[RMDB]
RNA sequence: GGGAACGACUCGAGUAGAGUCGAAAAUUCAUUUAAAUGAAUUGAAACAAAUUUAAUACAAGUGGAUGUAGGAUAACCGUCCGUCCUUUACAUUGGUAUAAAAGUGAUCUAAGAUUCUAUUUAUAAUUGCGCUCUCGCGUGUUCGCACGCGAGAGAAGGACAUGUAGAGUUUCGACUCUACAUGUCCAAAAGAAACAACAACAACAAC
Reactivity to 2A3 in 0.01 (KOAc 150mM, MgCl2 10mM, bicine 150mM(pH8.5), 24C), signal-to-noise 1, nucleotides 027 to 156: u010u000c000a000u070u130u200a150a300a080u010g000a000a010u070u020g010a020a000a090c070a030a140a110u200u290u300a100a050u100a030c060a110a040g130u050g070g070a100u080g060u100a080g000g010a020u030a030a100c000c050g000u020c000c000g010u050c000c020u090u090u000a000c010a030u040u000g060g020u060a010u050a140a020a020a020g040u030g020a070u090c030u040a060a100g060a040u040u100c030u070a210u080u080u010a110u110a250a170u100u110g060c010g000c020u020c000u000c000g010c000g000u030g000u050u000c130g000c100a000c010g000c000g020a000g000a000g000a000a000